[RMDB]
RNA sequence: GGGAACGACUCGAGUAGAGUCGAAAAGCUCUGGAAUUGAGGCCCCUCUAACAAUAAUCCAGAACUACUUCGCAGAGUAAUCUGCCGAAUCGUAGGAUGCCCAUUACUAUCUAUUUUUGGAGCAUCUAAAACUGUCAGUGCUUCGGCACUGACAGAACUUACAUAAUGUGUUCGCACAUUAUGUAAGAAAAGAAACAACAACAACAAC
Reactivity to 2A3 in 0.01 (KOAc 150mM, MgCl2 10mM, bicine 150mM(pH8.5), 24C), signal-to-noise 4, nucleotides 027 to 156: g030c020u000c010u020g010g050a100a090u070u100g060a100g070g080c010c010c030c000u100c080u110a140a100c060a040a080u160a050a040u030c010c020a020g000a080a030c020u030a010c010u030u020c010g000c000a000g010a010g030u100a130a150u010c000u010g030c050c050g030a010a020u090c050g030u040a040g070g000a000u010g000c000c000c000a010u030u010a040c040u040a060u200c030u080a240u120u070u010u010u030g020g000a130g010c010a000u020c020u060a030a020a010a140c000u000g000u010c000a000g000u000g000c010u040u050c100g050g000c000a000c000u000g000a000c000a000g000a000a000
Reactivity to DMS in 0.01 (KOAc 150mM, MgCl2 10mM, bicine 150mM(pH8.5), 24C), signal-to-noise 3, nucleotides 027 to 156: g010c000u030c020u000g000g020a040a160u000u000g000a110g000g030c060c010c020c040u000c060u000a130a140c020a060a090u000a070a160u000c000c000a050g010a040a070c000u000a110c080u000u000c050g010c030a050g000a060g010u020a130a130u000c000u000g000c010c060g000a070a040u010c110g010u000a170g000g000a030u000g010c000c000c010a060u000u010a100c150u010a170u000c110u000a200u000u000u010u000u000g000g000a090g030c000a040u000c010u000a030a020a100a140c000u000g020u000c020a010g020u010g000c000u000u000c300g050g000c000a020c010u000g000a000c000a000g000a030a070
Annotation: Conditions: 150 mM KOAc, 10 mM MgCl2 and 150 mM bicine (pH 8.5), 24 C. The record gives the reactivity of an RNA of 207 nucleotides to 2A3 and DMS. For 2A3, 3,881 sequencing reads were counted. As a SHAPE reagent, 2A3 marks flexible, mostly unpaired nucleotides at the ribose 2'-OH. For 2A3 the reverse transcriptase was SuperScript II with manganese.